[RMDB]
RNA sequence: GGGAACGACUCGAGUAGAGUCGAAAAGCGUACUACCAUAGUCGUAGUUCCGUUGAAAUUUAUCUACCCACCAGGUCCCAAAUAGGACCUGAGGAUAAAUGGAGGAACUAAAGUCUAUGGUAUCGCAAAGAAAUCGAUUGUUCGCAAUCGAUUUCAACACUAUAUUCUCCUUCGGGAGAAUAUAGUGAAAAGAAACAACAACAACAAC
Reactivity to 2A3 in 0.01 (KOAc 150mM, MgCl2 10mM, bicine 150mM(pH8.5), 24C), signal-to-noise 5, nucleotides 027 to 156: g000c000g020u060a060c050u010a000c020c000a000u000a000g010u000c020g050u010a010g000u000u000c000c000g070u080u030g020a020a020a000u000u000u000a000u000c010u030a130c060c030c070a040c020c000a010g020g010u000c020c020c020a160a290a160u170a080g000g000a000c000c000u000g000a010g000g000a000u000a000a000a000u010g010g010a030g010g000a010a000c000u020a060a100a020g010u000c000u000a000u000g000g000u010a000u030c000g000c000a040a060a030g000a000a000a000u000c000g000a000u010u010g050u070u120c300g010c140a000a000u000c000g000a000u000u000u000c000a000a010
Reactivity to DMS in 0.01 (KOAc 150mM, MgCl2 10mM, bicine 150mM(pH8.5), 24C), signal-to-noise 4, nucleotides 027 to 156: g020c010g000u010a040c040u000a020c000c010a000u000a020g020u000c020g020u010a020g000u000u000c010c000g020u000u010g020a180a130a020u000u000u000a010u000c000u000a010c000c000c000a300c090c010a020g000g000u000c000c010c020a050a190a210u020a050g020g010a020c000c000u000g000a050g010g020a010u000a010a020a020u000g020g010a240g000g000a020a010c000u000a070a030a100g000u000c010u000a020u000g010g000u000a010u000c010g050c010a070a100a170g010a000a020a010u000c010g000a020u000u000g000u010u000c300g010c030a020a030u000c010g000a010u000u000u000c000a100a280